[RMDB]
Record summary: Conditions: 150 mM KOAc, 10 mM MgCl2 and 150 mM bicine (pH 8.5), 24 C. This 177-nucleotide RNA was probed chemically with 2A3 and DMS. DMS adducts were read by reverse transcription with MarathonRT.
RNA sequence: GGGAACGACUCGAGUAGAGUCGAAAAGAAAGAAAGAAAGAGGCCUCCAGGGCCUUGUACAUGGUAGGCUUUCAUUCAUUGUUUGCACAUUCGGUGAAGGUCUACUGUGUGCCAGGCCCUGUGCCAACCUAACAAUGCUCUUCGGAGCAUUGUUAGGAAAAGAAACAACAACAACAAC
Reactivity to 2A3 in 0.01 (KOAc 150mM, MgCl2 10mM, bicine 150mM(pH8.5), 24C), signal-to-noise 7, nucleotides 027 to 126: g090a010a060a010g130a050a060a020g150a060a080a010g170a120g020g000c010c010u030c030c010a000g000g000g000c000c000u000u000g000u000a000c000a000u010g000g000u000a000g000g000c010u030u000u000c010a010u220u140c020a020u010u070g090u110u130u300g140c140a030c020a050u040u080c140g000g000u000g000a010a010g000g000u000c000u010a000c000u000g000u000g000u000g000c000c000a000g000g000c020c030c040u000g000u010g000c000c000a010a020
Reactivity to DMS in 0.01 (KOAc 150mM, MgCl2 10mM, bicine 150mM(pH8.5), 24C), signal-to-noise 3, nucleotides 027 to 126: g000a070a090a100g010a080a060a080g020a060a120a060g020a160g020g000c010c010u010c020c000a000g020g000g010c000c000u000u010g000u020a000c000a000u000g000g010u000a010g020g010c000u000u000u000c000a000u000u040c050a040u010u000g020u000u040u070g000c300a100c010a020u000u000c190g020g000u000g000a010a020g000g010u010c000u020a010c000u010g010u000g000u000g000c000c050a010g000g000c010c010c000u000g000u010g010c020c010a110a160